[RMDB]
RNA sequence: GGGAACGACUCGAGUAGAGUCGAAAACGGCGGCCAAGUUCAUCUUGGAUGUGGAUCCGCGUUACAUCCACCUGAUUCCGGCAAAUGUGAACGCCGACAUCAAGGCGACCACGGUGUUCGGCGGUAACCAGCCGCAGAAUUUCGAUUCUGCGGCUGGAAAAGAAACAACAACAACAAC
Reactivity to DMS in 0.01 (KOAc 150mM, MgCl2 10mM, bicine 150mM(pH8.5), 24C), signal-to-noise 1, nucleotides 027 to 126: c020g000g000c110g000g040c000c000a000a030g010u000u050c300a040u000c010u000u000g050g000a000u020g020u000g000g020a000u070c000c010g000c080g000u140u000a130c050a000u000c000c000a180c030c100u000g000a060u000u000c000c000g050g030c130a080a160a030u100g000u010g000a150a170c050g010c000c000g000a040c000a000u000c060a300a220g000g000c020g030a070c000c080a080c270g000g040u000g010u030u000c000g000g000c050g000g000u050a120a130
Reactivity to 2A3 in 0.01 (KOAc 150mM, MgCl2 10mM, bicine 150mM(pH8.5), 24C), signal-to-noise 3, nucleotides 027 to 126: c010g130g010c000g030g010c030c040a030a030g020u200u200c060a150u050c160u060u090g060g010a010u060g030u020g110g010a060u080c020c060g010c010g070u090u050a040c030a010u000c000c000a000c000c030u090g040a100u130u000c010c040g010g000c160a120a100a150u170g060u050g040a050a000c030g000c000c010g010a000c020a000u040c060a090a080g070g010c010g170a070c000c070a070c030g000g000u040g090u180u080c020g000g000c000g000g010u000a010a010
Overview:
Structure probing data (DMS and 2A3) for a 177-nucleotide construct. The DMS profile rests on 1,044 reads. Source: RMDB library OK1LIB, as collected in RNAgym. The reactions ran in a buffer of 150 mM KOAc, 10 mM MgCl2 and 150 mM bicine (pH 8.5), at 24 C. 2A3 adducts were read by reverse transcription with SuperScript II with manganese.